This 177-nucleotide RNA was probed chemically with DMS.

RNA sequence: GGGAACGACUCGAGUAGAGUCGAAAAGAUAUGGAAGCAGAUUUACACACUUGGGCUUCGACGAUCGCAUCGGGUCGGAAACGACCUUGCGGGAGAAGCCAAGUGUGUAAAUCUGCUUCCUAAGUCACCAUACCUAUCUCUUCGGAGAUAGGUAUGGAAAAGAAACAACAACAACAAC
Reactivity to DMS in 0.01 (KOAc 150mM, MgCl2 10mM, bicine 150mM(pH8.5), 24C), signal-to-noise 2, nucleotides 027 to 126: g000a040u010a300u030g000g000a020a020g000c030a010g000a030u010u030u000a000c000a000c010a020c000u010u010g020g050g020c010u000u000c000g020a120c300g000a060u020c010g010c000a070u030c300g020g000g010u000c000g010g000a070a110a300c000g010a010c000c000u000u010g000c010g000g010g000a070g000a010a000g030c000c000a000a000g000u010g000u010g000u000a000a030a000u000c000u000g000c000u000u000c000c010u000a010a080g010u000c010a300
It was measured as part of the RMDB library TTRINS.